Structure probing data (2A3 and DMS) for a 177-nucleotide construct. Values cover nucleotides 27 to 126.

[RMDB]
RNA sequence: GGGAACGACUCGAGUAGAGUCGAAAACAUGGCGCAGUGCGCGAUAGCGCUCUGCGCGCGUCAGGAUCGGAUCAGGUACAUCGAUCGUCUGAUCGUCAGGCCCUGAGCGGCCGUACCACGUGAUGCGGAAUCGAUCCAUGUUCGCAUGGAUCGAUUCAAAAGAAACAACAACAACAAC
Reactivity to 2A3 in 0.01 (KOAc 150mM, MgCl2 10mM, bicine 150mM(pH8.5), 24C), signal-to-noise 1, nucleotides 027 to 126: c030a040u090g130g000c020g000c000a000g000u000g020c020g000c010g120a180u160a130g000c000g000c010u020c000u000g000c000g010c000g000c000g070u030c030a050g000g110a060u060c020g020g020a040u050c050a050g020g040u070a030c040a080u070c080g010a070u020c010g120u070c200u220g000a010u020c000g050u060c110a040g000g020c000c000c020u090g150a060g040c130g030g010c000c010g020u040a040c000c040a060c040g070u060g020a050u050g060c030g040
Reactivity to DMS in 0.01 (KOAc 150mM, MgCl2 10mM, bicine 150mM(pH8.5), 24C), signal-to-noise 3, nucleotides 027 to 126: c120a080u020g000g030c000g010c010a000g000u000g030c010g030c010g000a180u020a140g010c000g000c010u000c000u000g020c020g010c010g000c070g010u000c040a060g010g010a100u010c040g000g010a100u000c030a050g030g020u000a110c050a130u000c080g000a030u000c060g010u010c170u020g010a020u000c010g010u000c150a180g000g030c040c010c000u020g000a120g000c110g010g010c010c030g010u010a070c020c040a130c150g010u000g010a040u010g020c050g000